[RMDB]
Annotation:
An RNA of 177 nucleotides, treated with 2A3 and DMS and read out base by base. The data come from the RNA Mapping Database (RMDB), library OK2TRN. Reactivities are given for positions 27 through 126. The DMS profile rests on 1,972 reads. DMS adducts were read by reverse transcription with MarathonRT.
RNA sequence: GGGAACGACUCGAGUAGAGUCGAAAAAAGAACAACGCAGCCAAUACCAGAAUCAUCGCAAUAUAGAAGCCGGAGAAUGCCGCUGCAUACACCAUUGGCCAGGCAGCAAACAGCGCCCCACCCGCAGCACAUAGUCAAUGUUCGCAUUGACUAUGUGAAAAGAAACAACAACAACAAC
Reactivity to 2A3 in 0.01 (KOAc 150mM, MgCl2 10mM, bicine 150mM(pH8.5), 24C), signal-to-noise 2, nucleotides 027 to 126: a010a010g020a060a010c040a020a000c060g000c060a020g040c010c010a050a030u070a080c020c010a020g110a040a060u110c040a030u050c060g000c060a090a030u180a010u030a300g170a260a020g030c050c050g000g040a000g060a100a030u080g050c050c010g010c050u020g020c010a010u120a040c050a000c030c030a050u060u080g020g000c030c000a040g030g040c040a010g010c000a000a020a130c020a030g050c010g030c020c010c010c000a010c000c030c020g070c020a000g080
Reactivity to DMS in 0.01 (KOAc 150mM, MgCl2 10mM, bicine 150mM(pH8.5), 24C), signal-to-noise 3, nucleotides 027 to 126: a070a040g000a100a040c050a050a060c070g010c060a070g010c030c040a070a100u010a070c090c020a070g000a090a040u000c090a030u000c090g010c060a100a090u000a090u010a110g010a110a120g020c080c050g000g000a070g010a060a110u000g020c050c060g000c070u010g000c050a060u010a090c080a080c060c040a070u010u000g020g030c030c060a060g020g000c070a020g010c060a030a040a070c090a080g020c070g000c030c010c010c030a080c010c000c020g030c200a100g040